Structure probing data (DMS and 2A3) for a 177-nucleotide construct. The 2A3 profile rests on 658 reads. The reactions ran in a buffer of 150 mM KOAc, 10 mM MgCl2 and 150 mM bicine (pH 8.5), at 24 C.
RNA sequence: GGGAACGACUCGAGUAGAGUCGAAAACAAUAUGAUGCGUAUGGUUUGCUUCAGGUUCCGCCAUAUCCUUCAUCUGCAGGUGUAGCUUAUGAUUAUCAAUUCGGUUUAGGGCAAGUAAUGGUAGGUAACCUUGCAUUCCCUUCGGGGAAUGCAAGGUAAAAGAAACAACAACAACAAC
Reactivity to DMS in 0.01 (KOAc 150mM, MgCl2 10mM, bicine 150mM(pH8.5), 24C), signal-to-noise 1, nucleotides 027 to 126: c090a090a080u020a060u000g010a090u000g020c070g000u010a060u000g010g000u000u010u000g030c050u010u050c030a040g040g010u000u000c050c050g030c030c030a060u000a030u010c110c040u010u000c070a050u000c060u010g000c060a050g000g020u010g030u010a080g010c050u000u000a030u010g000a070u010u000a060u010c130a050a110u010u010c060g010g000u000u000u010a090g000g000g000c070a040a080g010u000a030a060u000g000g000u000a010g010g000u000a160
Reactivity to 2A3 in 0.01 (KOAc 150mM, MgCl2 10mM, bicine 150mM(pH8.5), 24C), signal-to-noise 1, nucleotides 027 to 126: c030a000a070u110a090u130g090a090u160g040c000g070u060a040u210g050g080u090u100u070g000c000u000u130c080a030g000g090u060u000c020c050g000c020c000a040u080a070u110c010c020u080u060c010a050u110c040u070g000c020a040g140g050u110g000u020a090g010c070u090u050a040u150g160a000u010u030a020u140c060a070a100u120u000c040g100g070u060u070u230a030g070g000g050c050a070a000g020u030a080a000u010g120g000u000a030g050g000u030a010